[RMDB]
The record gives the reactivity of an RNA of 177 nucleotides to DMS and 2A3. For 2A3 the reverse transcriptase was SuperScript II with manganese. The reactions ran in a buffer of 150 mM KOAc, 10 mM MgCl2 and 150 mM bicine (pH 8.5), at 24 C. Source: RMDB libraries RFM100 and RFMREP, as collected in RNAgym.
RNA sequence: GGGAACGACUCGAGUAGAGUCGAAAAAGUUUUAGCUCCCAAGACCACUUUUGAUUUAGUCUUUGUUGACGUGGCACCCACAAUGGUCGAAACGUGAUACCUCGCUUAAGGGAUGUGGGUGCCACGUCCGUCUGAUGUCAUUCGUGACAUCAGACGGAAAAGAAACAACAACAACAAC
Reactivity to DMS in 0.01 (KOAc 150mM, MgCl2 10mM, bicine 150mM(pH8.5), 24C), signal-to-noise 2, nucleotides 027 to 126: a100g040u010u030u010u000a080g020c080u000c010c030c010a080a090g010a070c020c030a050c210u020u010u040u000g000a120u030u030u030a070g020u000c050u020u010u030g020u010u010g000a030c010g020u000g000g000c010a010c000c000c000a000c030a020a100u000g000g000u000c040g010a060a070a080c130g040u030g010a140u020a100c080c020u000c040g010c090u020u000a080a100g000g020g000a150u010g020u000g010g000g000u000g000c000c010a010c000g000u000
Reactivity to 2A3 in 0.01 (KOAc 150mM, MgCl2 10mM, bicine 150mM(pH8.5), 24C), signal-to-noise 1, nucleotides 027 to 126: a000g060u120u080u080u090a130g000c040u070c010c000c000a000a000g000a010c020c000a060c120u020u130u060u200g270a190u040u130u130a060g010u000c060u000u210u090g150u000u080g040a000c000g000u000g040g000c000a000c000c030c000a000c000a000a080u190g100g050u010c010g080a080a130a070c060g030u010g010a070u050a120c000c010u140c010g110c130u260u240a090a050g080g000g020a110u010g000u000g000g060g030u000g050c020c000a000c000g000u020